[RMDB]
RNA sequence: GGGAACGACUCGAGUAGAGUCGAAAACAGAGUUCGCUCUGAUCUCACCGUAGGUUGAGGUCACCGAUGAAACUGGCUACCCACCAUCCUUUCGAAAGAGAGGAUGAGGCCAGUGGAGGUGUCUCAACCUAAACGGCCAACCUAGCUUCGGCUAGAACGAGUAUGCGAUUUUCGAAUCGCAUACUCGAAAAGAAACAACAACAACAAC
Reactivity to DMS in 0.01 (KOAc 150mM, MgCl2 10mM, bicine 150mM(pH8.5), 24C), signal-to-noise 1, nucleotides 027 to 156: c000a040g010a020g000u000u000c230g040c010u000c030u000g000a100u010c000u000c000a120c030c020g060u050a020g040g000u000u000g000a040g010g020u010c010a010c000c000g000a160u000g000a130a130a030c010u010g020g000c000u000a040c030c000c040a300c150c000a020u000c000c000u030u000u000c010g000a260a120a300g010a010g000a010g000g000a000u010g010a050g000g010c040c000a010g020u000g010g010a120g040g000u020g110u010c000u000c030a050a010c020c000u040a010a050a010c030g010g040c040c050a090a060c060c030u010a040g010c060u000u010c230g030g050c000u010a040g000a050a250
Reactivity to 2A3 in 0.01 (KOAc 150mM, MgCl2 10mM, bicine 150mM(pH8.5), 24C), signal-to-noise 4, nucleotides 027 to 156: c000a000g020a010g030u120u130c210g100c130u020c000u010g070a120u030c010u040c030a070c030c000g000u020a010g010g000u000u000g010a010g030g080u230c020a000c010c020g100a300u090g010a020a020a000c000u000g000g030c020u060a130c050c060c070a030c040c000a010u000c010c000u000u020u010c010g060a090a060a020g010a020g010a000g000g000a000u000g000a000g010g000c000c000a000g010u000g000g030a010g000g000u000g050u000c000u000c010a010a000c000c000u000a010a010a000c020g020g000c040c040a050a070c090c000u020a000g000c010u060u070c260g090g000c010u010a010g050a050a030